RNA sequence: GGGAACGACUCGAGUAGAGUCGAAAAUGACCUCUAUAGUGUUAAUCAAUAUUUAGUAUGAGAGGCAAUCAGAGGGCGCUAUCAUGCAAACUAGGAUUGUCUGCUCAUGCACAGAACCAACUACCGACUAGUGAUGUAGGUUCGCCUACAUCACUAGAAAAGAAACAACAACAACAAC
Reactivity to 2A3 in 0.01 (KOAc 150mM, MgCl2 10mM, bicine 150mM(pH8.5), 24C), signal-to-noise 3, nucleotides 027 to 126: u050g050a030c010c000u000c040u100a120u090a190g070u080g040u150u160a110a130u120c040a100a030u090a110u300u200u180a140g010u010a000u030g000a000g000a000g020g000c000a000a000u000c000a000g010a030g120g120g000c010g000c000u130a180u300c030a040u300g000c000a000a020a000c020u010a000g000g010a020u000u000g010u000c010u000g040c000u000c010a000u000g000c010a000c000a020g130a010a020c020c020a010a060c060u080a070c020c030g140a060
Reactivity to DMS in 0.01 (KOAc 150mM, MgCl2 10mM, bicine 150mM(pH8.5), 24C), signal-to-noise 2, nucleotides 027 to 126: u040g000a070c070c020u000c170u010a060u010a050g030u010g000u010u000a050a060u030c070a050a120u000a110u020u000u000a130g010u020a010u020g000a050g000a090g010g030c000a000a000u000c020a010g020a010g000g000g000c300g020c000u000a070u030c140a050u000g030c000a070a300a150c010u000a020g010g000a010u010u000g000u000c000u000g000c000u000c050a000u010g020c000a090c220a070g000a030a050c050c050a090a050c060u000a050c070c090g000a140